[RMDB]
RNA sequence: GGGAACGACUCGAGUAGAGUCGAAAACGCAAGAAGGACACCACACGUCUGGACCUGAUGUUCCUCGGUACUUUCCGUCUGCAACCUACCGUCAACAAAAGCGGGAGCAAGGAGCUGGACAAACACAGGAAGUGUCGUAUUUCGAUACGACACUUCCAAAAGAAACAACAACAACAAC
Reactivity to DMS in 0.01 (KOAc 150mM, MgCl2 10mM, bicine 150mM(pH8.5), 24C), signal-to-noise 2, nucleotides 027 to 126: c140g030c070a040a230g030a050a010g000g080a000c010a030c000c020a020c120a070c090g020u030c050u000g010g020a040c020c040u000g010a050u000g030u000u000c000c000u020c040g000g000u000a040c120u060u000u000c020c000g160u050c110u000g000c020a150a060c090c040u000a150c000c000g070u060c070a080a070c300a070a050a190a090g010c120g020g010g000a110g010c080a060a060g000g010a150g000c040u010g040g000a080c110a040a050a110c150a000c190a040
Reactivity to 2A3 in 0.01 (KOAc 150mM, MgCl2 10mM, bicine 150mM(pH8.5), 24C), signal-to-noise 4, nucleotides 027 to 126: c090g020c050a030a020g060a050a040g130g000a000c030a040c040c010a020c010a000c050g040u040c000u010g010g050a040c000c020u080g040a100u090g040u050u030c000c000u050c040g020g000u110a100c050u060u050u050c030c030g010u010c030u030g000c010a050a090c000c010u090a080c010c010g090u120c030a120a080c000a110a260a030a020g010c020g030g020g010a020g070c020a060a010g050g000a060g010c060u110g040g030a030c070a090a060a000c100a040c030a070